[RMDB]
This 177-nucleotide RNA was probed chemically with 2A3 and DMS.
In probing experiments dimethyl sulfate is read out at A N1 and C N3, which are open when not base-paired.
Source: RMDB library OK2TRN, as collected in RNAgym.
The 2A3 profile rests on 8,622 reads.
RNA sequence: GGGAACGACUCGAGUAGAGUCGAAAAUCCAUGUAUUGGAGAAUGCAAGCAUCCAUUUGUUUGCAUAGAUGGACGUUGCAGACGAAACGAUUGCGCUCGGAAAGUAUGCCAACUUGGUGAAUCCUGACCAUAUACGGGGAUUCGUCCCCGUAUAUGGAAAAGAAACAACAACAACAAC
Reactivity to 2A3 in 0.01 (KOAc 150mM, MgCl2 10mM, bicine 150mM(pH8.5), 24C), signal-to-noise 6, nucleotides 027 to 126: u020c010c000a020u110g040u060a200u060u140g030g030a050g050a150a040u030g010c010a030a050g080c020a020u030c090c030a030u110u020u050g080u060u100u110g050c020a030u030a040g060a030u070g050g010a020c080g030u040u060g000c030a020g020a060c040g080a100a080a020c040g010a030u030u150g050c050g000c030u020c020g000g070a070a050a040g070u060a060u170g030c010c000a040a040c120u040u050g030g000u040g030a020a060u020c010c010u040g050a080
Reactivity to DMS in 0.01 (KOAc 150mM, MgCl2 10mM, bicine 150mM(pH8.5), 24C), signal-to-noise 8, nucleotides 027 to 126: u000c010c010a050u000g010u010a100u010u000g010g010a100g010a170a070u000g000c000a030a030g020c020a060u000c130c170a080u010u000u000g020u000u000u010g010c110a020u000a040g000a080u000g010g010a060c110g000u000u000g020c040a050g010a100c060g010a100a090a130c090g010a060u010u000g020c050g020c060u000c040g010g000a070a070a110g010u000a080u000g010c020c020a030a080c120u000u010g010g040u000g010a080a150u010c010c000u000g000a260

For DMS, 10,756 sequencing reads were counted. The reactions ran in a buffer of 150 mM KOAc, 10 mM MgCl2 and 150 mM bicine (pH 8.5), at 24 C.